[RMDB]
RNA sequence: GGGAACGACUCGAGUAGAGUCGAAAACUACGGGUACCUCAAAACCUACUCGAUCUCCAGAGGUUUUGGCGUGAGCAACUUCAACAUCACCAAGGUACUGCAGCCGGAAUCGAGGUUCCAUGUCACGGAAGAGGAGGUCAUGGAAACUUUGGAGUUCAUUGCAUCUGGUUUUCGAACCAGAUGCAAUAAAAGAAACAACAACAACAAC
Reactivity to 2A3 in 0.01 (KOAc 150mM, MgCl2 10mM, bicine 150mM(pH8.5), 24C), signal-to-noise 1, nucleotides 027 to 156: c040u080a030c070g050g040g000u020a020c010c010u090c020a050a070a060a080c000c010u040a130c010u140c080g060a080u000c030u000c020c000a050g020a070g020g000u010u000u020u010g010g020c030g070u130g030a050g000c080a070a060c060u180u100c060a090a080c000a150u090c010a010c070c030a120a060g050g000u020a050c010u010g080c010a020g040c030c000g020g060a030a010u110c070g030a030g040g010u010u010c000c000a010u000g020u000c030a010c240g080g080a210a100g030a100g090g080a010g000g000u010c000a000u010g010g000a000a110a020c000u020u010u100g010g000a030g020u080u080c020
The record gives the reactivity of an RNA of 207 nucleotides to 2A3. Values cover nucleotides 27 to 156. The data come from the RNA Mapping Database (RMDB), library OK3TST. For 2A3 the reverse transcriptase was SuperScript II with manganese. Conditions: 150 mM KOAc, 10 mM MgCl2 and 150 mM bicine (pH 8.5), 24 C. For 2A3, 795 sequencing reads were counted. High 2A3 reactivity points to a flexible backbone, as in loops and unpaired stretches.